[RMDB]
RNA sequence: GGGAACGACUCGAGUAGAGUCGAAAACGGCGACGAAGCCGGCCCGGUGCGGGGUGGGGCGCAGCCGGCCAGCAGCCCGAGAGCCAGGACCGAACACCCGAGGCGCCGCAAGACGGGCAUGCGACGGCUCCAAUGCAGGGUUCGCCCUGCAUUGGAGAAAAGAAACAACAACAACAAC
Reactivity to 2A3 in 0.01 (KOAc 150mM, MgCl2 10mM, bicine 150mM(pH8.5), 24C), signal-to-noise 1, nucleotides 027 to 126: c000g000g010c040g030a120c100g140a090a000g030c000c010g000g000c000c000c000g020g000u030g030c010g000g010g000g040u030g010g000g000g020c030g010c000a000g030c010c000g000g060c020c000a010g000c000a000g010c000c000c020g100a110g000a010g090c010c030a050g020g010a060c040c030g040a030a010c010a070c020c010c010g010a110g080g000c040g010c000c020g010c030a000a030g080a010c040g020g000g030c010a020u060g000c010g000a030c100g010g000
Reactivity to DMS in 0.01 (KOAc 150mM, MgCl2 10mM, bicine 150mM(pH8.5), 24C), signal-to-noise 2, nucleotides 027 to 126: c000g030g020c020g030a190c300g020a180a150g040c000c000g000g060c000c010c060g010g050u020g000c030g000g010g030g030u020g000g000g010g000c080g040c080a110g030c040c040g000g000c090c040a140g010c090a090g000c010c050c020g020a130g000a210g020c040c030a110g020g010a050c040c070g020a160a160c150a100c040c120c030g000a030g000g000c040g000c020c010g000c120a080a140g000a120c080g000g000g010c020a070u010g040c000g000a030c000g000g020
About this RNA:
The record gives the reactivity of an RNA of 177 nucleotides to 2A3 and DMS. For 2A3, 1,027 sequencing reads were counted. Reactivities are given for positions 27 through 126. 2A3 adducts were read by reverse transcription with SuperScript II with manganese. In probing experiments dimethyl sulfate is read out at A N1 and C N3, which are open when not base-paired. It was measured as part of the RMDB library OK1LIB.